[RMDB]
Record summary
Chemical mapping of a 207-nucleotide RNA with 2A3. Source: RMDB library M2RFPK, as collected in RNAgym. The RNA was probed in 150 mM KOAc, 10 mM MgCl2 and 150 mM bicine (pH 8.5) at 24 C. Reactivities are given for positions 27 through 156.
RNA sequence: GGGAACGACUCGAGUAGAGUCGAAAACAUUAUUCUGAUCAUCUGAAGAUCAGCUAUUAGAAGAGAAAGAUCAGUUAAGUCCUUUGGACCUGAUCAGCUUGAUACAAGAACUACUGAUUUCAACUUCAAAACGGGUGCUACUUCGGUAGCACCCGAACACAAGCAUACGCUUCGGCGUAUGCUUGUGAAAAGAAACAACAACAACAAC
Reactivity to 2A3 in 0.01 (KOAc 150mM, MgCl2 10mM, bicine 150mM(pH8.5), 24C), signal-to-noise 2, nucleotides 027 to 156: c010a040u210u100a110u240u090c000u010g000a030u000c040a040u020c090u300g160a140a050g010a040u030c000a000g030c030u180a150u230u170a050g050a030a010g010a020g070a110a060a000g010a030u010c000a000g000u060u210a180a010g000u030c000c060u060u100u290g000g040a020c020c050u060g010a070u080c000a020g030c000u040u060g020a010u040a140c060a060a020g030a080a050c080u110a010c030u100g010a060u030u120u030c070a070a070c020u070u110c060a000a090a090a000c010g000g010g010u010g020c000u000a010c010u020u070c170g050g000u000a000g000c000a000c020c000c000g000a000a000